[RMDB]
Structure probing data (DMS and 2A3) for a 177-nucleotide construct. Conditions: 150 mM KOAc, 10 mM MgCl2 and 150 mM bicine (pH 8.5), 24 C.
RNA sequence: GGGAACGACUCGAGUAGAGUCGAAAAAGUUUGCAAUGGUUCUGAAACAGACUUACGUUGCAUAACACCAGGAGCUGGUGCUUCUACUGGACGAGUUUUAUCAGUGUGGAUUUCUCCAAGACCGUCAACUAAGCUCAAGGUUCGCCUUGAGCUUAGUAAAAGAAACAACAACAACAAC
Reactivity to DMS in 0.01 (KOAc 150mM, MgCl2 10mM, bicine 150mM(pH8.5), 24C), signal-to-noise 3, nucleotides 027 to 126: a160g000u000u000u000g020c020a030a010u000g010g010u000u010c030u010g020a170a100a100c120a030g000a060c240u010u000a300c060g000u000u000g020c020a020u000a050a040c010a140c040c030a090g030g010a080g020c060u000g010g000u010g010c050u000u000c060u000a090c130u010g010g010a050c060g010a110g000u010u010u010u000a070u000c060a070g020u000g010u000g010g010a110u000u000u020c030u000c010c110a030a120g020a080c030c030g000u000c110a120
Reactivity to 2A3 in 0.01 (KOAc 150mM, MgCl2 10mM, bicine 150mM(pH8.5), 24C), signal-to-noise 1, nucleotides 027 to 126: a000g020u000u000u000g000c010a000a010u060g040g030u070u060c000u070g130a240a130a150c100a060g020a020c050u120u090a040c080g020u000u020g000c020a020u080a180a020c030a030c050c020a000g100g000a060g000c060u040g010g080u140g070c000u030u000c020u050a070c050u040g060g000a030c030g050a080g090u000u040u000u130a160u100c100a050g030u030g050u100g190g110a130u050u110u070c100u000c000c030a000a040g020a090c030c040g000u060c030a000

For 2A3, 1,405 sequencing reads were counted.